This 177-nucleotide RNA was probed chemically with 2A3 and DMS. The 2A3 profile rests on 2,117 reads.
RNA sequence: GGGAACGACUCGAGUAGAGUCGAAAAGAUAUGGACCGGGUCGGUGCCGAUGAGGUGCAAUCGGAAACGAUUGUCACCGAGGCACGGCGCCUAGCGGUCCUAAGUCAAAUCGUGUCUUCGGACACGAGAAUUCCGACUGGUUCGCCAGUCGGAAUUCAAAAGAAACAACAACAACAAC
Reactivity to 2A3 in 0.01 (KOAc 150mM, MgCl2 10mM, bicine 150mM(pH8.5), 24C), signal-to-noise 1, nucleotides 027 to 126: g030a000u030a030u100g000g000a000c010c000g160g130g020u150c200g000g120u050g000c040c000g130a300u110g080a030g000g000u000g040c010a020a000u000c000g030g020a000a000a000c010g010a020u020u060g160u300c020a000c000c010g000a000g000g070c020a000c000g000g000c000g010c030c090u270a300g230c000g030g000u030c010c000u000a010a000g020u000c030a020a000a280u080c010g020u010g010u000c020u050u050c300g110g020a000c000a000c010g000a040
Reactivity to DMS in 0.01 (KOAc 150mM, MgCl2 10mM, bicine 150mM(pH8.5), 24C), signal-to-noise 1, nucleotides 027 to 126: g020a080u000a160u020g000g000a010c000c000g000g000g030u000c140g030g050u010g040c000c010g010a040u000g000a300g000g000u000g070c000a020a000u000c010g000g010a030a010a100c060g010a010u000u000g020u040c020a000c000c000g000a050g030g000c030a040c020g010g010c000g040c300c140u000a220g010c040g000g000u000c000c000u010a010a060g000u000c010a110a110a300u000c010g010u000g000u000c000u000u020c180g030g000a000c000a000c000g000a020